[RMDB]
Notes: This 177-nucleotide RNA was probed chemically with DMS and 2A3. It was measured as part of the RMDB library M2PK50. Values are in units of 0.01, from 0 to 300, in steps of 10. DMS adducts were read by reverse transcription with MarathonRT. Reactivities are given for positions 27 through 126. Conditions: 150 mM KOAc, 10 mM MgCl2 and 150 mM bicine (pH 8.5), 24 C.

RNA sequence: GGGAACGACUCGAGUAGAGUCGAAAAAGGGCUGGAUUCGUCCAGCCCUGCACAUUCGUUCGCAACGAAGCGUACGUCAUUACGCAAAUGACGUAAAGCGUAGAACCACGGACUUCGGUCCGUGGAAGAAAGGGUAGAGUUUCGACUCUACCCUUUCAAAAGAAACAACAACAACAAC
Reactivity to DMS in 0.01 (KOAc 150mM, MgCl2 10mM, bicine 150mM(pH8.5), 24C), signal-to-noise 8, nucleotides 027 to 126: a020g010g010g020c000u000g010g010a020u000u010c190g020u000c000c000a010g000c000c000c000u000g010c140a080c160a160u010u000c040g010u000u000c140g000c110a140a070c060g000a060a150g000c050g010u000a020c000g000u000c000a000u000u000a080c300g010c260a080a020a010u000g000a010c000g000u000a020a030a120g020c020g000u010a090g010a140a210c010c000a000c000g010g010a020c000u000u020c180g020g010u000c000c000g010u000g000g000a010a030
Reactivity to 2A3 in 0.01 (KOAc 150mM, MgCl2 10mM, bicine 150mM(pH8.5), 24C), signal-to-noise 3, nucleotides 027 to 126: a010g000g010g000c000u000g020g000a030u050u040c130g060u010c060c000a000g000c000c000c000u000g000c010a030c000a130u090u080c020g050u040u070c070g000c110a060a080c060g050a100a040g010c020g030u020a000c000g000u020c010a020u000u080a090c140g010c230a080a040a010u030g020a010c010g000u030a040a040a110g020c010g050u080a040g030a120a050c000c000a000c010g010g000a010c000u030u050c210g050g000u020c000c000g010u000g000g000a000a030